[RMDB]
RNA sequence: GGGAACGACUCGAGUAGAGUCGAAAACAAACACCAGCGAAAAGGAAGAAAAACCAAAACGUGAACUACCUGACGAAACACGAAAGCUGGUGUAAACCGUCAAGUAACAAAAACAAAACAAACAAAACGAUAGGCCAUUAUUCGUAAUGGCCUAUCGAAAAGAAACAACAACAACAAC
Reactivity to DMS in 0.01 (KOAc 150mM, MgCl2 10mM, bicine 150mM(pH8.5), 24C), signal-to-noise 1, nucleotides 027 to 126: c030a040a110a000c000a060c040c000a000g050c000g020a050a000a050a230g060g000a060a060g010a090a050a100a230a110c000c000a050a040a080a180c050g000u010g020a140a060c240u040a040c000c000u000g000a050c000g000a040a080a060c020a000c000g000a070a000a080g000c000u000g010g080u000g000u030a010a020a080c040c010g000u020c070a030a020g000u000a080a000c300a070a120a080a110a080c300a030a040a000a020c170a000a080a150c130a070a020a040a080
Reactivity to 2A3 in 0.01 (KOAc 150mM, MgCl2 10mM, bicine 150mM(pH8.5), 24C), signal-to-noise 3, nucleotides 027 to 126: c040a000a110a000c000a010c000c000a000g010c010g060a050a080a130a020g070g000a060a070g150a160a140a000a010a000c040c030a040a040a000a030c080g040u040g020a070a030c030u070a040c070c000u030g070a030c100g070a030a060a000c030a000c010g040a010a090a010g000c000u000g000g000u000g000u030a020a000a000c010c000g070u060c050a050a080g050u130a050a060c140a090a020a080a000a000c080a020a200a030a020c020a130a110a000c040a030a070a000a030